[RMDB]
RNA sequence: GGGAACGACUCGAGUAGAGUCGAAAAUAUCGUUGAACUGCCGUUUCCGGUAGUAUUGCUAUCGACGCUGAGUUGACCACCGAUCACAAUCUGAUGACCUGCGGCGCCUGCGGCACCAACGGUCUGAAAUGAUGGACUGGUUCGCCAGUCCAUCAUUAAAAGAAACAACAACAACAAC
Reactivity to DMS in 0.01 (KOAc 150mM, MgCl2 10mM, bicine 150mM(pH8.5), 24C), signal-to-noise 2, nucleotides 027 to 126: u030a070u000c110g020u010u020g020a100a110c050u000g000c040c000g020u000u000u020c200c030g000g010u020a000g000u000a040u000u030g020c100u010a160u000c010g010a030c040g000c050u000g000a070g020u000u000g020a050c040c020a130c100c050g000a050u000c130a050c190a090a100u000c090u020g000a090u000g010a000c020c000u000g010c300g000g000c030g020c020c040u000g030c130g020g000c020a010c000c000a030a300c230g000g010u010c020u000g000a040